The data come from the RNA Mapping Database (RMDB), library TTRINS. Structure probing data (DMS and 2A3) for a 177-nucleotide construct. Values are in units of 0.01, from 0 to 300, in steps of 10.
[RMDB]
RNA sequence: GGGAACGACUCGAGUAGAGUCGAAAAGAUAUGGAUUUUCCCUAUGGGCUCGAAGUAAGGUAGAGCUGUGAUCGGAAACGAUCACUGCUCUAUAAUCUUACGUAGUCAUAGGGAAAAUCCUAAGUCACGUUUAAGAAAUCUUCGGAUUUCUUAAACGAAAAGAAACAACAACAACAAC
Reactivity to DMS in 0.01 (KOAc 150mM, MgCl2 10mM, bicine 150mM(pH8.5), 24C), signal-to-noise 2, nucleotides 027 to 126: g000a040u000a300u000g010g000a010u010u000u000u000c000c010c010u000a020u000g060g020g020c010u000c120g020a080a140g010u000a040a050g010g020u000a010g000a000g010c000u010g000u000g010a010u000c000g000g020a140a090a240c000g010a010u000c000a000c000u000g000c000u000c010u000a010u000a150a150u010c010u000u000a060c010g030u010a020g010u000c000a010u000a000g020g020g000a010a000a000a000u010c000c000u000a010a090g000u010c040a300
Reactivity to 2A3 in 0.01 (KOAc 150mM, MgCl2 10mM, bicine 150mM(pH8.5), 24C), signal-to-noise 1, nucleotides 027 to 126: g050a050u070a080u240g000g000a000u000u010u010u030c010c000c000u030a040u100g240g250g120c020u030c110g160a300a030g040u050a040a040g260g030u000a010g000a000g010c020u000g000u000g000a010u000c030g020g070a100a040a120c030g000a000u000c000a000c010u000g030c010u000c000u000a070u030a040a080u070c010u010u020a120c010g010u000a000g010u000c000a000u000a000g020g000g000a000a000a000a000u010c010c000u010a010a010g020u010c030a010
Conditions: 150 mM KOAc, 10 mM MgCl2 and 150 mM bicine (pH 8.5), 24 C.